[RMDB]
RNA sequence: GGGAACGACUCGAGUAGAGUCGAAAAAUAACCUUAGGUAUGUUGUAUAAACAUAACGGCAAACUAGUUAUAGCUAAGGUGUUUCACUACGUUAUAACUUAAAUUAAAGUGCCACAGAGACGAAUCUUUCACCAAAAAAUUUCGAUUUUUUGGUGAAAAAAGAAACAACAACAACAAC
Reactivity to DMS in 0.01 (KOAc 150mM, MgCl2 10mM, bicine 150mM(pH8.5), 24C), signal-to-noise 2, nucleotides 027 to 126: a030u010a060a170c000c000u020u000a080g070g020u060a030u010g000u000u050g030u010a240u080a140a030a070c090a000u010a050a100c220g000g050c000a040a010a070c200u000a040g010u020u020a000u000a000g000c000u000a090a090g000g000u000g030u020u000u090c010a030c040u000a290c240g010u000u000a010u000a010a000c000u040u030a050a130a170u030u060a030a060a120g020u010g000c000c060a050c150a060g000a200g010a020c040g000a090a200u030c030u030
Reactivity to 2A3 in 0.01 (KOAc 150mM, MgCl2 10mM, bicine 150mM(pH8.5), 24C), signal-to-noise 1, nucleotides 027 to 126: a000u070a000a050c010c000u040u040a050g030g050u050a080u040g000u000u030g000u080a060u080a140a030a000c000a010u020a160a000c020g000g000c000a090a150a000c060u040a000g000u000u010a000u030a010g080c040u010a140a300g020g000u120g010u000u180u300c050a010c100u070a000c000g030u010u010a000u000a000a000c020u050u090a000a000a080u070u200a140a050a020g060u040g040c020c020a000c020a000g070a030g020a070c100g010a070a030u010c020u000

The record gives the reactivity of an RNA of 177 nucleotides to DMS and 2A3. DMS (dimethyl sulfate) methylates the pairing face of unpaired adenines and cytosines. The RNA was probed in 150 mM KOAc, 10 mM MgCl2 and 150 mM bicine (pH 8.5) at 24 C.